Chemical mapping of a 177-nucleotide RNA with DMS and 2A3. It was measured as part of the RMDB library OK2TRN. The 2A3 profile rests on 2,300 reads. DMS adducts were read by reverse transcription with MarathonRT.

[RMDB]
RNA sequence: GGGAACGACUCGAGUAGAGUCGAAAAUCAGAUGAGACUAGUCAUCAGACUAGAUAGUAUCACACUACUGGUACAUAGUAGAGACAUACAUAGAUGUGUAUGACACAUCAGAGGCGCGGGCCACCGAACUCGUAUCGGUAUUCGUACCGAUACGAGUAAAAGAAACAACAACAACAAC
Reactivity to DMS in 0.01 (KOAc 150mM, MgCl2 10mM, bicine 150mM(pH8.5), 24C), signal-to-noise 3, nucleotides 027 to 126: u020c090a170g040a060u000g010a140g020a120c020u000a040g000u000c000a170u010c180a130g020a020c040u000a010g000a130u010a110g020u000a030u000c080a160c200a130c050u000a020c040u000g010g000u010a110c130a080u030a010g010u010a030g010a130g000a090c150a020u020a010c050a050u000a080g000a070u010g010u000g000u000a100u010g000a140c050a010c030a020u000c020a070g010a090g020g000c060g000c080g030g000g040c020c030a060c050c020g000a090
Reactivity to 2A3 in 0.01 (KOAc 150mM, MgCl2 10mM, bicine 150mM(pH8.5), 24C), signal-to-noise 2, nucleotides 027 to 126: u060c010a020g060a090u070g040a030g060a120c010u000a010g020u030c020a200u070c080a130g010a000c000u000a000g030a030u060a010g040u040a040u050c010a000c010a010c080u070a020c010u030g000g050u120a080c040a090u080a020g000u010a020g030a000g010a080c030a050u100a030c030a020u120a090g070a080u110g020u000g010u020a170u290g110a050c000a000c000a020u030c010a000g050a060g040g010c050g020c020g060g020g040c030c010a020c040c020g040a050